[RMDB]
RNA sequence: GGGAACGACUCGAGUAGAGUCGAAAAAACAAGCUUUUUAAGUGUUCCUUUAGCAUCUGGAACAUCCGUUUUAUCUCCAGGUUUUAUUUCUACAUCUAUAUCUCCACUUCCACUUUCUAUUUUUCCACCUCAGUGCCAUAUUCGUAUGGCACUGAGGAAAAGAAACAACAACAACAAC
Reactivity to 2A3 in 0.01 (KOAc 150mM, MgCl2 10mM, bicine 150mM(pH8.5), 24C), signal-to-noise 4, nucleotides 027 to 126: a000a000c220a080a020g090c070u190u140u070u160u170a120a040g030u020g000u060u020c000c000u050u020u120a070g040c070a030u110c030u090g010g020a020a030c020a040u100c010c050g050u030u030u090u060a050u040c050u000c020c010a050g010g070u010u020u040u030a080u010u130u090c040u030a080c030a030u040c050u110a050u050a070u100c020u020c050c010a020c000u020u000c010c030a060c030u020u080u010c040u040a180u100u050u000u040u030c010c030a050
The record gives the reactivity of an RNA of 177 nucleotides to 2A3. For 2A3, 1,935 sequencing reads were counted. The reactions ran in a buffer of 150 mM KOAc, 10 mM MgCl2 and 150 mM bicine (pH 8.5), at 24 C. Reactivities are given for positions 27 through 126.